Source: RMDB library OK2TRN, as collected in RNAgym. The record gives the reactivity of an RNA of 177 nucleotides to DMS. Values cover nucleotides 27 to 126. For DMS, 1,605 sequencing reads were counted. DMS adducts were read by reverse transcription with MarathonRT.

RNA sequence: GGGAACGACUCGAGUAGAGUCGAAAACAGGAUAACGCAUUACCUAAUGGGGGUCCACCUAUCUGUUAGUCACCAUGAGCCUCCGUGAGAAUCAGAAAUGAGGAAAACUUGACCUAGUAUGCAUGUAUCUAGUUCUCCAUUUCGAUGGAGAACUAGAAAAAGAAACAACAACAACAAC
Reactivity to DMS in 0.01 (KOAc 150mM, MgCl2 10mM, bicine 150mM(pH8.5), 24C), signal-to-noise 3, nucleotides 027 to 126: c080a120g040g010a120u010a100a120c130g010c050a060u010u010a130c130c060u020a060a090u010g020g000g000g000g010u000c030c040a120c060c060u000a060u020c030u000g010u000u010a090g000u000c070a070c060c080a080u000g000a090g010c030c000u000c060c060g010u010g020a050g000a080a140u000c040a000g020a070a060a090u000g010a030g010g010a070a070a080a060c130u000u000g000a110c060c000u010a030g000u000a030u010g000c110a120u000g000u000a110